[RMDB]
RNA sequence: GGGAACGACUCGAGUAGAGUCGAAAAAUGCAGAAGUAGUUCAGCGGUAGAAUACAACCUUGCCAAGGUUGGGGUCGCGGGUUCGAAUCCCGUCUUCUGCUCCAUUAUUUUGCCGGGGUGGCGGAACCUACUACCAGACGUUCGCGUCUGGUAGUAGAAAAGAAACAACAACAACAAC
Reactivity to DMS in 0.01 (KOAc 150mM, MgCl2 10mM, bicine 150mM(pH8.5), 24C), signal-to-noise 3, nucleotides 027 to 126: a030u010g060c000a030g010a000a000g020u000a080g020u000u020c010a110g000c130g000g010u040a000g020a090a030u030a040c030a000a000c030c010u000u030g010c280c300a090a010g000g070u000u000g000g010g030g010u040c000g000c020g000g020g010u000u000c000g000a300a020u000c000c000c000g000u000c020u020u000c080u000g000c000u000c020c030a050u070u020a210u050u020u000u020g000c010c000g020g000g010g030u030g000g000c060g000g000a040a100c130
Reactivity to 2A3 in 0.01 (KOAc 150mM, MgCl2 10mM, bicine 150mM(pH8.5), 24C), signal-to-noise 5, nucleotides 027 to 126: a000u170g010c000a000g000a010a000g000u010a000g000u010u000c010a010g000c040g220g270u120a000g030a010a010u020a010c000a000a020c000c000u080u290g260c110c120a060a010g000g000u000u000g000g000g020g030u110c000g000c000g010g000g000u020u000c000g000a000a000u000c010c000c000g000u000c000u010u000c020u010g010c000u000c000c000a010u070u140a140u070u140u150u180g040c040c030g110g010g040g040u230g060g020c040g000g010a030a000c010

Structure probing data (DMS and 2A3) for a 177-nucleotide construct.
Reactivities are given for positions 27 through 126.
The reactions ran in a buffer of 150 mM KOAc, 10 mM MgCl2 and 150 mM bicine (pH 8.5), at 24 C.
2A3 adducts were read by reverse transcription with SuperScript II with manganese.
In probing experiments dimethyl sulfate is read out at A N1 and C N3, which are open when not base-paired.